[RMDB]
RNA sequence: GGGAACGACUCGAGUAGAGUCGAAAAGAAGACGUGACGAAAAGUCACGUCAAUACAGAGACUACGCAACUCUGAAAAAAACAACAAAAGUUUAAAAGCGUAGCAGGAUCGAGAGAUCCUGAAAAGACGGCUAAAUACUAUUCGUAGUAUUUAGCCGAAAAGAAACAACAACAACAAC
Reactivity to 2A3 in 0.01 (KOAc 150mM, MgCl2 10mM, bicine 150mM(pH8.5), 24C), signal-to-noise 3, nucleotides 027 to 126: g150a060a040g000a000c000g000u010g000a000c000g090a130a090a040a170g000u000c000a000c000g000u000c000a000a000u050a000c000a000g030a010g020a040c000u010a000c000g010c030a120a080c030u000c010u020g010a030a010a000a000a000a000a000c130a030a010c050a020a060a030a090g020u090u090u130a040a110a020a000g000c010g000u000a000g000c000a000g000g000a000u000c000g010a030g000a010g000a100u000c000c000u000g010a000a000a000a010g040a020
Reactivity to DMS in 0.01 (KOAc 150mM, MgCl2 10mM, bicine 150mM(pH8.5), 24C), signal-to-noise 3, nucleotides 027 to 126: g020a270a150g000a010c000g050u000g000a020c000g000a150a130a070a230g020u000c000a000c000g000u010c010a020a030u020a210c030a000g010a000g030a150c000u000a010c000g000c030a080a040c020u000c000u020g000a030a000a060a020a010a020a120c060a040a120c140a060a140a120a070g000u000u000u000a030a030a070a250g000c000g000u000a000g010c010a000g000g000a000u000c010g000a190g000a130g020a000u010c000c000u000g000a060a050a090a050g010a140

Source information
An RNA of 177 nucleotides, treated with 2A3 and DMS and read out base by base. Conditions: 150 mM KOAc, 10 mM MgCl2 and 150 mM bicine (pH 8.5), 24 C. It was measured as part of the RMDB library OK1LIB. For DMS, 4,326 sequencing reads were counted. For 2A3, 4,090 sequencing reads were counted.